Source: RMDB library RNAMAK, as collected in RNAgym.
This 207-nucleotide RNA was probed chemically with 2A3.
The RNA was probed in 150 mM KOAc, 10 mM MgCl2 and 150 mM bicine (pH 8.5) at 24 C.
RNA sequence: GGGAACGACUCGAGUAGAGUCGAAAACCCGUAAUUCGUUACGGGAAAAAAUCCUAAGUCAUUCGUUGAUCGUCAUGGGAGCUUUGAUCUAUCGGAAACGAUAGGGAGCUUAGUGACGGGAGAAUGAUAUGGAAAAAAAUCGCCUUUCGAGGCGAAACCACGCUAACGGAUUCGUCCGUUAGCGUGGAAAAGAAACAACAACAACAAC
Reactivity to 2A3 in 0.01 (KOAc 150mM, MgCl2 10mM, bicine 150mM(pH8.5), 24C), signal-to-noise 1, nucleotides 027 to 156: c020c000c000g050u000a020a040u080u140c120g040u030u030a030c030g000g000g000a200a000a020a000a020a070u030c050c010u100a140a030g020u000c000a000u000u000c000g100u100u020g000a030u020c000g050u020c000a000u010g060g300g030a010g000c020u220u180u040g100a100u080c000u000a020u010c000g090g000a180a020a060c030g040a000u060a000g000g010g000a000g000c000u000u010a010g020u010g000a000c000g000g000g000a000g000a000a000u010g010a000u000a050u080g010g160a010a080a000a000a020a060a240u050c000g020c070c000u090u100u040c230g100a000g020g000c000g000a000a000a000